[RMDB]
RNA sequence: GGGAACGACUCGAGUAGAGUCGAAAAGAUAUGGACAGCAGGGAGUCGGCCAGGACGAAUUCGGAAACGAACUAUCCUGGCGACGAGGAUCUGCUGUCCUAAGUCAAAACUGCUGUUCGCAGCAGAAGUUGUAUUUAAGCUUCGGCUUAAAUACAACAAAAGAAACAACAACAACAAC
Reactivity to DMS in 0.01 (KOAc 150mM, MgCl2 10mM, bicine 150mM(pH8.5), 24C), signal-to-noise 5, nucleotides 027 to 126: g010a060u000a300u000g000g000a020c000a010g010c010a010g000g000g000a120g020u000c000g020g050c010c010a010g000g000a020c170g020a070a160u000u000c010g000g010a100a100a180c000g020a010a010c090u000a200u000c000c000u000g000g000c000g010a010c000g000a080g000g000a060u000c010u010g020c010u000g000u000c000c000u010a010a050g000u000c030a090a070a090a180c010u000g000c010u000g010u000u010c210g020c020a020g000c010a020g010a070a100
Reactivity to 2A3 in 0.01 (KOAc 150mM, MgCl2 10mM, bicine 150mM(pH8.5), 24C), signal-to-noise 4, nucleotides 027 to 126: g010a020u060a020u110g000g000a000c010a000g000c000a000g020g000g020a010g010u010c070g150g300c020c000a010g010g000a020c080g140a120a300u050u010c010g030g030a010a060a070c020g000a000a010c040u020a050u050c000c000u010g010g000c000g000a000c000g000a010g010g000a000u000c000u000g000c000u000g000u000c000c000u000a000a000g000u000c010a000a010a120a160c010u010g000c000u010g040u140u120c300g000c150a010g000c000a010g040a060a040
Source: RMDB library TTRDEL, as collected in RNAgym. The record gives the reactivity of an RNA of 177 nucleotides to DMS and 2A3. For DMS the reverse transcriptase was MarathonRT. The RNA was probed in 150 mM KOAc, 10 mM MgCl2 and 150 mM bicine (pH 8.5) at 24 C.